Chemical mapping of a 177-nucleotide RNA with 2A3 and DMS. DMS (dimethyl sulfate) methylates the pairing face of unpaired adenines and cytosines. Values cover nucleotides 27 to 126. For DMS, 74,760 sequencing reads were counted. For DMS the reverse transcriptase was MarathonRT. The 2A3 profile rests on 59,819 reads. The RNA was probed in 150 mM KOAc, 10 mM MgCl2 and 150 mM bicine (pH 8.5) at 24 C.
[RMDB]
RNA sequence: GGGAACGACUCGAGUAGAGUCGAAAACAUGCAGGCGUCUGGUGCUAGGCGUGCAGCGCCAGGGUCAGCACUGCGUGCUGAGGCGGCCGAAGGGCCGCUGUCACGCCCGGCGAUUGGCCUACACGACGCAUGAGGCGAGCUUCGGUUUGCUUCGUGCAAAAGAAACAACAACAACAAC
Reactivity to 2A3 in 0.01 (KOAc 150mM, MgCl2 10mM, bicine 150mM(pH8.5), 24C), signal-to-noise 6, nucleotides 027 to 126: c020a010u080g010c020a010g030g010c010g060u040c040u090g060g020u070g020c030u020a030g030g000c020g040u080g030c030a000g010c000g000c000c010a030g020g010g050u150c040a010g010c030a020c010u080g020c040g020u000g000c000u010g010a020g000g010c000g000g000c000c000g050a040a040g040g020g000c000c000g000c000u000g000u010c010a010c030g000c000c000c000g010g000c010g100a170u050u100g060g000c000c000u020a010c040a000c030g070a010c050
Reactivity to DMS in 0.01 (KOAc 150mM, MgCl2 10mM, bicine 150mM(pH8.5), 24C), signal-to-noise 9, nucleotides 027 to 126: c050a090u030g010c050a070g000g000c010g000u010c020u020g010g010u020g000c090u000a060g010g010c010g030u010g010c100a050g000c010g000c010c010a050g000g000g010u020c100a070g000c050a050c010u010g000c160g020u000g010c020u000g010a170g000g020c010g000g010c000c000g000a170a100g010g010g010c000c010g010c010u000g000u020c050a070c160g010c010c010c010g010g010c020g000a100u020u010g010g000c000c000u000a050c040a040c060g000a080c110